[RMDB]
RNA sequence: GGGAACGACUCGAGUAGAGUCGAAAAUCGCCGAUCACUCUAACCUCCCUCACUGCGUCUUUUCCGGACGACGUUCGAGGGACCGGCCUCAGUUCCGUCCGGACGGGGUACAUGUUGAUCGGGGCCGUCCUGCAUCCUCAUUCGUGAGGAUGCAGGAAAAAGAAACAACAACAACAAC
Reactivity to 2A3 in 0.01 (KOAc 150mM, MgCl2 10mM, bicine 150mM(pH8.5), 24C), signal-to-noise 4, nucleotides 027 to 126: u080c010g070c050c010g000a010u000c000a040c050u060c030u080a040a110c010c020u020c010c000c010u010c010a040c070u110g010c000g000u020c010u030u190u120u070c060c060g050g000a020c040g040a020c010g040u090u150c040g010a000g020g000g000a000c000c010g050g020c000c010u050c030a100g010u120u050c030c020g110u130c090c120g030g000a000c020g000g000g010g000u060a120c050a110u200g010u090u070g020a020u000c010g000g000g030g000c010c000g050
Reactivity to DMS in 0.01 (KOAc 150mM, MgCl2 10mM, bicine 150mM(pH8.5), 24C), signal-to-noise 2, nucleotides 027 to 126: u000c060g000c000c000g000a010u000c030a040c100u020c200u000a070a130c100c260u020c000c000c080u020c020a010c040u010g000c060g030u000c000u000u000u000u010c150c150g000g000a080c080g000a020c040g000u000u020c120g060a000g030g020g000a030c150c110g030g000c000c000u000c010a200g010u020u000c100c000g000u040c170c140g050g010a030c030g000g000g010g000u040a030c040a040u010g000u010u000g010a000u000c020g000g000g000g000c090c020g050
This 177-nucleotide RNA was probed chemically with 2A3 and DMS. The RNA was probed in 150 mM KOAc, 10 mM MgCl2 and 150 mM bicine (pH 8.5) at 24 C. 2A3 adducts were read by reverse transcription with SuperScript II with manganese. The data come from the RNA Mapping Database (RMDB), library OK1LIB.